[RMDB]
RNA sequence: GGGAACGACUCGAGUAGAGUCGAAAACGUUGCCCCCAGCGAGGCCUCACAUUCCAUUUACUCUGAUGGAUCCACCUAUAUAGCAACUGGGCUCAGCAGAGGCAACACGAUGAGGUCUAUACAGUCGCAGGGCGAAAGCCUGCAUACUGGAGAAGGCCUAACUAGGGUAAUUCGUUACCCUAGUUAGAAAAGAAACAACAACAACAAC
Reactivity to 2A3 in 0.01 (KOAc 150mM, MgCl2 10mM, bicine 150mM(pH8.5), 24C), signal-to-noise 3, nucleotides 027 to 156: c080g040u030u080g030c000c020c000c010c000a020g040c000g030a020g000g030c010c010u030c000a030c010a080u120u030c020c030a040u080u060u100a130c070u060c020u050g010a020u010g010g010a010u030c020c000a090c070c020u110a140u080a070u140a300g080c030a070a020c050u050g020g000g010c030u020c030a020g000c010a010g000a010g060g000c040a040a050c060a030c100g050a050u060g020a000g000g000u000c020u030a050u050a100c030a000g030u030c040g060c000a040g000g130g080c050g040a060a070a020g060c010c000u020g000c010a040u070a110c010u010g060g020a080g030a100a030g060g000c030
Reactivity to DMS in 0.01 (KOAc 150mM, MgCl2 10mM, bicine 150mM(pH8.5), 24C), signal-to-noise 3, nucleotides 027 to 156: c080g020u000u000g000c010c010c000c000c030a140g000c040g020a090g040g020c010c020u000c050a070c040a150u010u000c030c030a090u010u000u000a100c080u000c070u010g030a040u000g010g020a040u000c040c030a020c060c040u010a220u000a170u000a110g050c160a120a090c050u000g030g030g000c020u010c010a140g030c030a120g020a050g020g030c050a040a040c050a060c120g000a100u000g000a040g020g040u000c000u010a160u000a080c100a070g020u000c180g020c010a090g040g030g020c020g000a110a140a300g000c000c000u000g020c010a080u010a020c030u000g010g000a130g010a120a080g000g030c000

An RNA of 207 nucleotides, treated with 2A3 and DMS and read out base by base. It was measured as part of the RMDB library OK3TST. Conditions: 150 mM KOAc, 10 mM MgCl2 and 150 mM bicine (pH 8.5), 24 C. For 2A3, 1,988 sequencing reads were counted.